Source: RMDB library OK2TST, as collected in RNAgym. An RNA of 177 nucleotides, treated with DMS and 2A3 and read out base by base. The RNA was probed in 150 mM KOAc, 10 mM MgCl2 and 150 mM bicine (pH 8.5) at 24 C. For DMS the reverse transcriptase was MarathonRT. The DMS profile rests on 2,329 reads.
[RMDB]
RNA sequence: GGGAACGACUCGAGUAGAGUCGAAAAGAGGUGGUGUAUCAAUACUAGUGAGGGAGGACCUACCAGUCGAGACCGGUAUGGCCGUUGUUGGUCGCAUUGAACAAGUGCAUGCAACAAUUCACCUUGCACGUACGCACUCAUUCGUGAGUGCGUACGUAAAAGAAACAACAACAACAAC
Reactivity to DMS in 0.01 (KOAc 150mM, MgCl2 10mM, bicine 150mM(pH8.5), 24C), signal-to-noise 3, nucleotides 027 to 126: g020a050g000g020u000g020g010u000g030u010a090u010c070a090a090u010a130c110u000a040g030u010g000a050g020g000g020a140g020g000a060c020c010u000a040c040c020a070g010u000c160g020a070g010a130c010c040g020g020u000a030u010g010g020c050c040g000u010u010g000u000u010g010g010u000c120g010c010a020u040u000g000a100a060c170a100a020g030u020g010c010a110u010g010c030a020a010c050a010a060u000u000c140a150c070c020u010u000g010c210
Reactivity to 2A3 in 0.01 (KOAc 150mM, MgCl2 10mM, bicine 150mM(pH8.5), 24C), signal-to-noise 2, nucleotides 027 to 126: g100a010g050g050u040g010g020u030g020u050a090u180c030a120a000u030a200c040u050a040g030u020g040a080g000g060g020a070g000g010a000c000c000u020a020c000c030a010g010u030c020g020a020g060a120c050c000g000g000u110a090u160g020g030c040c040g040u010u010g020u010u020g040g030u030c110g060c000a010u000u050g030a070a040c070a160a020g020u020g020c010a010u120g040c000a020a000c000a000a080u100u080c050a030c060c000u000u050g020c050